[RMDB]
RNA sequence: GGGAACGACUCGAGUAGAGUCGAAAAGAAGCUCUCUAAUGUAAGUCUACUUUGUAUUGGGUUGAGCCUCAUCUGUCAGGGUAUGAGAAAUAAGUUGUAGGAGUUAGGGAAAGCAGAGGAUGACAUCUAGUUGAUAGGUAUUCGUACCUAUCAACUAAAAAGAAACAACAACAACAAC
Reactivity to DMS in 0.01 (KOAc 150mM, MgCl2 10mM, bicine 150mM(pH8.5), 24C), signal-to-noise 7, nucleotides 027 to 126: g010a110a080g010c040u000c020u010c030u000a050a050u000g010u010a040a070g000u010c100u010a100c090u010u000u010g010u000a040u000u000g000g000g010u000u000g000a060g010c030c020u000c030a070u000c060u000g010u010c070a070g000g010g030u000a040u000g010a070g000a070a060a080u000a060a090g020u000u010g020u000a070g010g010a080g010u000u000a060g010g000g000a050a040a080g010c050a050g010a070g000g000a080u000g000a060c120a090u010c130
Reactivity to 2A3 in 0.01 (KOAc 150mM, MgCl2 10mM, bicine 150mM(pH8.5), 24C), signal-to-noise 4, nucleotides 027 to 126: g050a050a010g020c000u020c000u000c030u080a060a060u080g050u050a040a090g040u050c100u100a090c040u110u060u060g020u070a070u050u060g050g020g000u110u070g020a000g020c000c010u010c010a080u010c030u050g180u100c060a060g010g000g060u080a040u110g070a020g090a040a130a030u160a080a060g070u090u090g040u090a040g000g080a080g020u030u070a030g020g020g010a030a060a020g000c010a000g010a020g080g010a040u090g030a020c010a070u070c050